[RMDB]
RNA sequence: GGGAACGACUCGAGUAGAGUCGAAAAAAAAAACUCAGACGCCAACGACGACGUCUACGCUGUAGCCGCUUAAGGCUUAAGCCCCGAACCCACUUGUGCCUGUGCUCGUGGAUGUAGGGUCACUAUCACGGGAUCGCUGCUGGUUGCCGUCCGUCGGGGUCUAAAUAGUGUUCGCACUAUUUAGACCAAAAGAAACAACAACAACAAC
Reactivity to 2A3 in 0.01 (KOAc 150mM, MgCl2 10mM, bicine 150mM(pH8.5), 24C), signal-to-noise 3, nucleotides 027 to 156: a000a000a000a000a000a000c100u090c020a070g010a020c020g030c020c020a120a030c050g060a020c030g010a010c000g040u000c010u050a030c050g010c020u060g010u070a010g010c010c020g050c220u270u170a160a030g000g000c000u020u020a040a000g020c010c010c010c010g030a050a020c000c000c010a000c010u010u050g010u010g030c010c030u060g020u050g020c010u030c040g000u010g020g010a030u040g000u020a020g000g020g000u020c000a010c050u120a060u120c020a020c050g030g040g000a030u080c090g020c050u060g000c000u010g070g030u050u070g050c010c000g010u030c030c010g030u050c050g030g030
Chemical mapping of a 207-nucleotide RNA with 2A3. The RNA was probed in 150 mM KOAc, 10 mM MgCl2 and 150 mM bicine (pH 8.5) at 24 C. Values cover nucleotides 27 to 156. For 2A3, 2,296 sequencing reads were counted. The data come from the RNA Mapping Database (RMDB), library RSTRND.